Overview:
This 207-nucleotide RNA was probed chemically with 2A3 and DMS. Reactivities are given for positions 27 through 156. The 2A3 profile rests on 2,785 reads. The RNA was probed in 150 mM KOAc, 10 mM MgCl2 and 150 mM bicine (pH 8.5) at 24 C. 2A3 is a SHAPE reagent: it acylates the 2'-hydroxyl of flexible nucleotides of all four kinds. For DMS the reverse transcriptase was MarathonRT.
RNA sequence: GGGAACGACUCGAGUAGAGUCGAAAAGAUUUAAACAGAUGGAGAUACACAAAUGUUUUAAUCCCAGUAACAAAAAUCCUGGUAUCUCGGGUAUACAGUAGUGCAGAUACUGUAUUUUUAAUGCUCCUUAGGUUUUCCAUCUUCGGAUGGAAAACAAACUGUUACGUUAGUUCGCUAACGUAACAGUAAAAGAAACAACAACAACAAC
Reactivity to 2A3 in 0.01 (KOAc 150mM, MgCl2 10mM, bicine 150mM(pH8.5), 24C), signal-to-noise 4, nucleotides 027 to 156: g000a010u070u080u050a000a020a010c000a010g050a060u030g020g000a010g000a010u030a010c010a000c010a030a130a060u030g020u010u040u050u050a050a030u050c010c010c020a040g110u140a120a120c110a120a190a010a000a030u030c000c000u000g020g000u010a010u000c010u000c000g000g020g010u000a000u000a000c000a000g010u020a010g050u050g300c070a020g070a230u010a030c000u010g000u000a000u000u010u000u020u110a130a110u090g050c010u100c050c060u060u080a050g080g070u000u000u000u000c000c000a000u000c000u020u040c220g060g000a000u000g000g000a000a000a000a000c000a010a020
Reactivity to DMS in 0.01 (KOAc 150mM, MgCl2 10mM, bicine 150mM(pH8.5), 24C), signal-to-noise 2, nucleotides 027 to 156: g030a150u010u000u000a060a050a050c030a070g020a250u000g020g000a030g000a060u000a020c010a120c050a040a140a260u000g000u000u010u010u000a100a180u000c000c000c020a180g020u000a150a160c090a020a110a050a070a100u000c020c000u000g050g000u000a010u000c030u000c000g010g010g000u000a070u000a000c020a010g010u000a030g000u010g080c160a140g010a220u000a000c000u010g000u000a000u010u010u000u010u010a140a160u000g010c030u000c000c030u000u000a180g010g000u000u020u000u020c010c000a010u000c000u000u000c230g020g050a030u000g010g000a000a000a000a000c000a030a030